[RMDB]
RNA sequence: GGGAACGACUCGAGUAGAGUCGAAAACAAGUACUUUGCUACAUUUAGUAAGAACUGAUUAGUGGUCAUACCCAUGGAAGUCAAAAACUCUAGCAUGGUGGCUCAUCCUUAUAAUCCCAGCACUUUGGGAGGCUGAGGCAGAAGGAUCAGUUGAGUACCGGACUAAAUAUUUCGAUAUUUAGUCCGGAAAAGAAACAACAACAACAAC
Reactivity to DMS in 0.01 (KOAc 150mM, MgCl2 10mM, bicine 150mM(pH8.5), 24C), signal-to-noise 1, nucleotides 027 to 156: c060a090a140g010u010a030c020u000u000u000g000c000u000a060c070a050u000u000u000a040g000u010a050a050g020a090a090c000u000g030a060u020u000a020g020u000g050g040u000c030a150u000a170c060c020c010a030u000g000g000a090a070g020u000c030a080a120a210a110a110c070u000c060u000a150g050c030a070u020g000g000u000g010g030c050u000c040a060u000c010c000u000u000a080u020a130a170u000c000c000c000a070g000c130a110c160u000u020u030g040g020g000a090g010g000c070u000g020a000g050g110c110a010g020a070a070g050g020a000u000c000a110g040u000u000g010a090g030u010a200
Reactivity to 2A3 in 0.01 (KOAc 150mM, MgCl2 10mM, bicine 150mM(pH8.5), 24C), signal-to-noise 2, nucleotides 027 to 156: c030a020a020g030u030a030c040u030u120u170g010c000u030a060c010a180u250u160u080a050g010u010a040a140g010a070a080c000u010g030a020u060u110a060g050u060g110g000u060c020a040u080a170c020c000c060a010u010g030g050a050a100g060u060c080a070a030a010a030a170c100u100c010u090a050g030c010a020u040g010g070u010g030g000c020u030c090a040u080c010c000u010u010a050u030a180a050u060c000c000c020a010g010c040a090c110u160u150u120g040g060g040a030g030g010c030u020g000a060g020g020c030a030g030a180a000g030g010a010u020c000a000g030u060u050g040a010g000u020a060
Structure probing data (DMS and 2A3) for a 207-nucleotide construct. It was measured as part of the RMDB library OK3TST. For DMS, 1,501 sequencing reads were counted. The reactions ran in a buffer of 150 mM KOAc, 10 mM MgCl2 and 150 mM bicine (pH 8.5), at 24 C.